[RMDB]
RNA sequence: GGGAACGACUCGAGUAGAGUCGAAAAUCCCAAAGCGGAUUUAGCUCGGUUGGGAGAGUACCAGACCGAAGAUCUGGUGGUCCUGUGUUCGAUCCACAGAAUUCGCACCAUAAACAACGGGAGAUUCAAAUUAAUACUAUUUCGAUAGUAUUAAUUUAAAAGAAACAACAACAACAAC
Reactivity to DMS in 0.01 (KOAc 150mM, MgCl2 10mM, bicine 150mM(pH8.5), 24C), signal-to-noise 9, nucleotides 027 to 126: u010c000c000c000a070a090a100g020c060g010g000a030u010u000u010a090g000c030u010c020g000g000u010u030g000g010g010a070g010a130g010u010a050c010c010a030g000a040c030c070g030a120a130g010a260u010c030u000g010g000u000g010g010u010c050c010u000g010u010g010u010u010c110g000a300u010c110c040a040c020a050g000a080a040u010u010c060g000c030a140c080c070a050u020a080a110a090c170a080a130c100g000g010g010a130g000a100u020u020c090
Reactivity to 2A3 in 0.01 (KOAc 150mM, MgCl2 10mM, bicine 150mM(pH8.5), 24C), signal-to-noise 9, nucleotides 027 to 126: u010c000c000c000a040a030a000g020c010g010g000a010u010u040u090a030g020c010u010c040g110g040u140u170g090g090g010a070g000a010g040u020a020c000c000a010g020a030c010c110g170a110a040g050a140u010c010u020g010g000u010g010g040u090c010c000u020g010u000g010u020u050c030g010a020u010c010c000a010c010a020g020a020a040u050u030c010g000c030a050c020c000a070u180a150a140a040c070a060a050c090g050g060g010a080g020a030u110u110c060